[RMDB]
RNA sequence: GGGAACGACUCGAGUAGAGUCGAAAAGGGGUCCCAUAAGACAGCGACUAGAGGGAGCGAGGAUCAUAACUGAAGCCUCCACGGUUAUGGGAGCUCCCGAUUGGUCGCAAUGACGUGGGACGGAGGCACCCAUGGGGUUGACGUUCGCGUCAACCAAGUAUGUGUUUAACUUCGGUUAAACACAUACAAAAGAAACAACAACAACAAC
Reactivity to 2A3 in 0.01 (KOAc 150mM, MgCl2 10mM, bicine 150mM(pH8.5), 24C), signal-to-noise 1, nucleotides 027 to 156: g000g030g050g040u000c000c000c000a010u080a080a070g100a060c120a070g040c010g030a000c010u070a030g020a120g110g010g010a010g000c010g010a300g010g020a000u000c000a000u000a000a000c000u030g090a150a010g030c000c000u020c000c000a000c000g030g000u010u010a000u010g000g000g000a010g000c000u000c000c030c020g000a010u010u010g000g000u010c000g000c000a010a130u190g030a030c040g030u040g000g000g030a020c030g000g000a000g000g010c000a050c000c010c000a060u130g130g000g000g050u010u010g000a010c000g010u040u080c260g000c000g070u000c000a000a000c000c000a000a010
Reactivity to DMS in 0.01 (KOAc 150mM, MgCl2 10mM, bicine 150mM(pH8.5), 24C), signal-to-noise 1, nucleotides 027 to 156: g020g040g010g000u000c000c020c010a060u000a060a170g010a140c050a020g020c010g020a040c020u010a070g020a250g020g010g010a010g070c070g000a120g030g010a070u010c010a030u010a020a050c020u020g000a050a120g060c000c010u010c020c010a300c080g000g020u010u000a050u000g010g000g000a090g000c010u000c040c010c020g000a000u000u000g030g020u000c000g090c040a090a030u000g030a090c090g000u000g020g010g010a000c000g030g000a000g120g050c040a300c040c010c000a210u000g030g080g060g070u000u030g010a010c000g030u000u010c300g040c060g000u000c010a000a000c010c000a030a210